[RMDB]
RNA sequence: GGGAACGACUCGAGUAGAGUCGAAAACCAAUGGGAAACCAUUGGCAACUCGGAAACGAGUUGAACUGGGAAUUACGCACAAAACCAGCGACAAUGCGAUUUUAAGCAUUGUCGAUUACGCCCAUGUCGAUUUUAAGACAUGGAGCGAAUGUGCGAAGGAUCGAGGUCCGUUCGCGGACUUUGAUCCAAAAGAAACAACAACAACAAC
Reactivity to 2A3 in 0.01 (KOAc 150mM, MgCl2 10mM, bicine 150mM(pH8.5), 24C), signal-to-noise 2, nucleotides 027 to 156: c000c000a000a000u010g000g010g000a040a010a050c000c000a000u000u000g000g000c000a000a000c000u000c010g000g030a030a050a030c010g000a010g000u000u000g010a070a040c010u010g010g000g020a040a040u110u080a080c020g000c010a000c000a010a020a010a050c010c000a000g000c000g010a000c010a000a000u010g000c030g130a210u040u110u130u300a110a010g000c000a000u000u010g000u000c010g000a000u000u050a060c010g010c010c000c000a000u000g000u000c010g040a120u020u110u080u300a150a050g000a000c000a000u000g000g000a180g000c000g000a030a070u230g000u000g000c000g040a160a160